[RMDB]
RNA sequence: GGGAACGACUCGAGUAGAGUCGAAAAUGAUAUAAUCUGCAUCCGACAACGAUCACCAACUUCCACCUUGAUCGAUUGGUCGCAUAAUCCAUUAAAUUUGGAAGUAGUCGCUCAUGCUUACAAAUACGAUCGAGCGUACGUUCGCGUACGCUCGAUCAAAAGAAACAACAACAACAAC
Reactivity to 2A3 in 0.01 (KOAc 150mM, MgCl2 10mM, bicine 150mM(pH8.5), 24C), signal-to-noise 1, nucleotides 027 to 126: u070g050a000u010a010u000a260a110u000c000u050g040c000a010u000c000c050g040a010c000a070a070c080g030a010u090c030a000c030c000a130a050c060u070u000c020c000a050c000c000u080u070g040a040u030c010g100a060u020u080g040g000u190c000g000c100a040u090a110a060u030c000c000a000u000u300a160a160a000u010u060u000g000g000a000a000g060u000a040g030u050c000g000c020u050c000a030u030g080c000u030u010a000c030a000a040a040u140a120c040